This 207-nucleotide RNA was probed chemically with 2A3 and DMS. For 2A3 the reverse transcriptase was SuperScript II with manganese. The data come from the RNA Mapping Database (RMDB), library RSTRND. Reactivities are given for positions 27 through 156. The RNA was probed in 150 mM KOAc, 10 mM MgCl2 and 150 mM bicine (pH 8.5) at 24 C.
RNA sequence: GGGAACGACUCGAGUAGAGUCGAAAAACAGACAGCGGAGCCAUUAACGAGGAUCGCGCCCGGUAGGGUUACUUUACAGGGCGUUAAACAAUAGGUGACUCGCCUGCCAUCAGUCCGCCGGUUGACGGAUGCCAGGUUAAAUUAAAAAACAUGGCUAGUGUCUAAUAUAGUUCGCUAUAUUAGACACAAAAGAAACAACAACAACAAC
Reactivity to 2A3 in 0.01 (KOAc 150mM, MgCl2 10mM, bicine 150mM(pH8.5), 24C), signal-to-noise 4, nucleotides 027 to 156: a010c040a020g170a020c020a010g030c050g080g030a020g020c030c010a050u090u080a110a060c070g010a040g030g020a030u050c010g010c000g000c000c000c000g020g010u010a020g040g000g030u130u100a070c010u080u050u040a010c030a040g000g010g000c010g010u030u080a050a080a010c060a080a130u070a090g070g000u020g030a020c000u000c020g010c000c000u000g000c000c000a010u000c000a010g010u000c000c040g020c000c030g130g010u080u100g000a000c000g010g010a000u010g000c010c000a000g000g000u000u020a000a050a050u070u090a030a030a020a010a000a010c050a060u060g010g000c010u030a030
Reactivity to DMS in 0.01 (KOAc 150mM, MgCl2 10mM, bicine 150mM(pH8.5), 24C), signal-to-noise 2, nucleotides 027 to 156: a060c060a140g000a070c050a040g010c050g000g000a060g010c020c040a070u010u000a040a100c060g030a120g030g010a080u000c040g010c010g020c000c000c020g020g100u000a030g000g050g030u010u000a030c030u000u000u020a040c020a100g030g020g010c020g030u000u000a090a110a110c080a050a130u000a130g010g000u010g020a060c010u000c010g010c040c010u000g040c030c000a050u000c080a110g010u010c000c020g010c030c040g020g000u000u010g010a090c000g000g000a020u000g030c060c000a020g020g020u000u010a000a010a120u010u040a010a060a070a110a010a020c030a050u010g000g010c000u000a180